[RMDB]
An RNA of 177 nucleotides, treated with 2A3 and read out base by base.

RNA sequence: GGGAACGACUCGAGUAGAGUCGAAAAUUCGGUUUAUGCUAUAGCUAAGUAAGCUUAGUUUACAAUGGAAUUGAUUAGGGAUGUUCUACAUCGUUCUUUUGCAUUGUAAUUCUAAGUAUGCUUAUGCCGACGGUGCGUUAUUCGUAACGCACCGUCGAAAAGAAACAACAACAACAAC
Reactivity to 2A3 in 0.01 (KOAc 150mM, MgCl2 10mM, bicine 150mM(pH8.5), 24C), signal-to-noise 1, nucleotides 027 to 126: u040u040c090g060g010u070u020u010a060u070g050c050u090a020u030a300g000c000u000a000a000g000u000a100a100g000c000u000u000a000g000u000u000u000a000c000a000a000u000g160g000a250a000u000u040g000a020u220u000a120g020g300g000a020u000g000u250u120c140u180a020c000a060u000c020g100u080u090c000u030u040u060u000g140c050a000u000u000g010u000a010a010u000u000c000u000a020a020g000u000a040u140g000c000u030u000a040u240g000c000
The reactions ran in a buffer of 150 mM KOAc, 10 mM MgCl2 and 150 mM bicine (pH 8.5), at 24 C. Source: RMDB library OK1LIB, as collected in RNAgym. For 2A3 the reverse transcriptase was SuperScript II with manganese.